[RMDB]
The data come from the RNA Mapping Database (RMDB), library P50LIB. Structure probing data (DMS and 2A3) for a 115-nucleotide construct. Reactivities are given for positions 27 through 95. DMS adducts were read by reverse transcription with MarathonRT.
RNA sequence: GGGAACGACUCGAGUAGAGUCGAAAAAUAAAACGACUCUAAACCAUUCGCGUAACGAGUCAAGUGAGUGGAAAUAAGCAGUGCUUCGGCACUGCAAAAGAAACAACAACAACAAC
Reactivity to DMS in 0.01 (KOAc 150mM, MgCl2 10mM, bicine 150mM(pH8.5), 24C), signal-to-noise 1, nucleotides 027 to 095: a080u060a010a070a080a090c030g000a030c000u000c020u020a020a080a090c030c010a070u010u020c090g040c090g000u000a110a110c070g000a040g000u000c010a100a100g010u010g000a060g000u010g000g010a060a040a050u030a100a080g010c030a010g000u000g010c010u000u030c120g000g000c040a000c020u020g010c030a000
Reactivity to 2A3 in 0.01 (KOAc 150mM, MgCl2 10mM, bicine 150mM(pH8.5), 24C), signal-to-noise 2, nucleotides 027 to 095: a000u070a000a040a020a000c000g020a010c000u030c010u000a020a010a000c020c010a030u100u100c050g000c000g080u040a060a010c060g020a010g050u050c010a030a040g070u060g050a040g040u030g030g060a070a090a030u120a090a040g020c010a000g010u000g020c000u000u030c080g070g020c010a010c000u020g010c000a010
In probing experiments dimethyl sulfate is read out at A N1 and C N3, which are open when not base-paired. 2A3 adducts were read by reverse transcription with SuperScript II with manganese. The RNA was probed in 150 mM KOAc, 10 mM MgCl2 and 150 mM bicine (pH 8.5) at 24 C.